Source: RMDB library OK3TST, as collected in RNAgym.
Structure probing data (2A3) for a 207-nucleotide construct.
The 2A3 profile rests on 495 reads.
Reactivities are given for positions 27 through 156.
RNA sequence: GGGAACGACUCGAGUAGAGUCGAAAAUAAAUGAUCAAGAAGGUAUUACCAAUGAUUCAAGACCAGAAGAAAUUACUUACCAAAGCGGCAAUACAAUUCAAGCCAAAACAGCUUUAACUGUUGAAGCAAUAAUGAACAUUCAAGGACAUCUCAAACAGUCCACAUACUCUUUCGAGAGUAUGUGGACAAAAGAAACAACAACAACAAC
Reactivity to 2A3 in 0.01 (KOAc 150mM, MgCl2 10mM, bicine 150mM(pH8.5), 24C), signal-to-noise 1, nucleotides 027 to 156: u110a000a030a030u040g030a010u040c010a000a030g050a050a040g060g000u120a050u080u190a120c040c050a000a030u050g030a070u050u180c040a110a040g020a030c000c070a070g060a170a000g110a050a220a000u140u050a030c040u060u090a050c050c050a010a010a000g020c030g050g000c000a000a010u120a140c100a020a000u000u160c040a050a000g020c040c030a120a030a000a000c010a000g010c020u080u190u160a050a040c040u030g010u030u070g030a070a020g000c000a010a000u100a070a070u070g000a000a030c010a050u020u150c070a050a000g030g000a070c050a140u040c000u070c110a200a070a050c000a210